[RMDB]
RNA sequence: GGGAACGACUCGAGUAGAGUCGAAAAACCUCAGUCUUCGGACUGAGGUGAGCGGAGCAUGGUGGCCGUGGGAACUCCUCCUUGGUGACAAGGGCCCUCGGGGUGCGGCACGCUUCGGCGUGCCGAACGUCUAUAGUCGAUUCGUCGACUAUAGACGAAAAGAAACAACAACAACAAC
Reactivity to 2A3 in 0.01 (KOAc 150mM, MgCl2 10mM, bicine 150mM(pH8.5), 24C), signal-to-noise 2, nucleotides 027 to 126: a000c000c000u000c000a010g000u010c000u020u150c220g150g000a000c000u000g000a010g000g000u000g000a020g000c060g030g020a040g020c090a100u120g100g040u090g110g050c030c040g030u050g000g020g000a050a050c030u020c030c000u030c000c030u040u020g020g020u090g030a040c010a030a020g000g000g020c000c000c010u010c000g030g000g010g020u110g060c020g010g000c020a000c020g000c030u050u050c190g070g000c000g000u040g000c000c000g000a020a010
Reactivity to DMS in 0.01 (KOAc 150mM, MgCl2 10mM, bicine 150mM(pH8.5), 24C), signal-to-noise 4, nucleotides 027 to 126: a030c000c000u000c000a000g000u000c000u000u010c220g030g000a020c000u000g000a010g010g010u000g000a050g010c080g010g000a090g010c070a070u010g010g010u010g010g010c020c030g020u000g000g010g000a090a090c080u010c050c050u000c010c010u000u010g010g010u010g000a190c040a020a020g010g000g010c010c010c000u000c050g000g000g000g020u000g010c010g010g010c000a020c000g030c000u000u000c140g020g000c010g030u000g000c000c000g000a010a060